[RMDB]
An RNA of 207 nucleotides, treated with 2A3 and DMS and read out base by base.
The DMS profile rests on 2,274 reads.
The reactions ran in a buffer of 150 mM KOAc, 10 mM MgCl2 and 150 mM bicine (pH 8.5), at 24 C.
Values cover nucleotides 27 to 156.
For 2A3 the reverse transcriptase was SuperScript II with manganese.
For 2A3, 1,167 sequencing reads were counted.
RNA sequence: GGGAACGACUCGAGUAGAGUCGAAAAUAAGAUAUCAGAGGAGAUCAAGAAGUCCUACUGAUCAAACAUGCGCUUCCAAUAGUAGAAGGACGUUAAGCAUUUAUCAUUGAACUAUAAUUGUUCAUUGAAGUCAUUGAUGCAAACUCCUUGGUCACACGGGUAUAAUAACGUUCGCGUUAUUAUACCCAAAAGAAACAACAACAACAAC
Reactivity to 2A3 in 0.01 (KOAc 150mM, MgCl2 10mM, bicine 150mM(pH8.5), 24C), signal-to-noise 3, nucleotides 027 to 156: u090a010a020g040a040u040a000u110c020a000g000a010g020g020a030g030a070u120c130a080a150g060a210a000g170u010c030c000u080a210c000u000g000a020u040c060a010a050a020c040a090u110g020c060g020c060u070u030c020c000a010a170u080a130g060u020a020g050a040a000g000g000a010c120g010u030u030a130a100g000c000a000u050u040u050a080u060c030a000u010u020g000a000a000c010u010a040u090a300a210u240u150g000u020u000c000a000u010u030g020a030a010g010u070c040a070u020u210g020a000u040g000c000a010a010a110c000u020c020c000u010u020g090g070u180c030a020c020a030c120
Reactivity to DMS in 0.01 (KOAc 150mM, MgCl2 10mM, bicine 150mM(pH8.5), 24C), signal-to-noise 1, nucleotides 027 to 156: u000a110a160g000a190u000a110u010c030a070g010a090g030g010a090g010a090u000c040a100a100g000a080a240g020u000c010c030u010a080c000u010g010a070u000c100a070a090a100c040a050u000g010c010g010c030u010u000c050c040a100a090u000a070g030u000a080g000a100a040g000g010a050c030g000u000u000a150a230g010c020a030u020u000u000a070u010c000a010u010u010g010a010a030c020u010a100u010a110a190u010u010g000u010u000c000a030u000u000g050a030a100g030u000c140a120u020u010g000a020u000g000c020a160a140a040c000u000c010c020u000u010g000g010u000c050a080c100a050c100